[RMDB]
RNA sequence: GGGAACGACUCGAGUAGAGUCGAAAAGUCCUGUUCGCAGGACCAUACUCCUAAGUCCAAAGCGAAUAGGGAGUACGAUAAGUAUCGGAAACGAUACUUUUGACGUACGAAGAACUAUUCGACUUUGGAUAUGGAUACACCGAGCCUUCGGGCUCAAGCAACUGACCUUAUUCGUAAGGUCAGUUGCAAAAGAAACAACAACAACAAC
Reactivity to 2A3 in 0.01 (KOAc 150mM, MgCl2 10mM, bicine 150mM(pH8.5), 24C), signal-to-noise 3, nucleotides 027 to 156: g000u010c000c000u000g000u030u080c270g030c020a000g000g000a000c000c010a050u160a110c060u020c000c000u050a140a030g020u000c000c010a010a000a000g000c000g000a000a000u000a010g030g000g010a010g000u010a010c010g030a070u030a030a000g010u000a000u000c000g010g040a080a070a030c000g010a000u000a000c000u020u030u050u040g150a070c020g000u000a000c000g020a180a020g010a000a000c010u020a010u020u010c030g220a300c120u000u000u000g000g000a000u000a000u010g000g000a020u010a100c120a040c050c120g030a000g010c000c010u090u190c300g130g020g010c030u030c070a110a020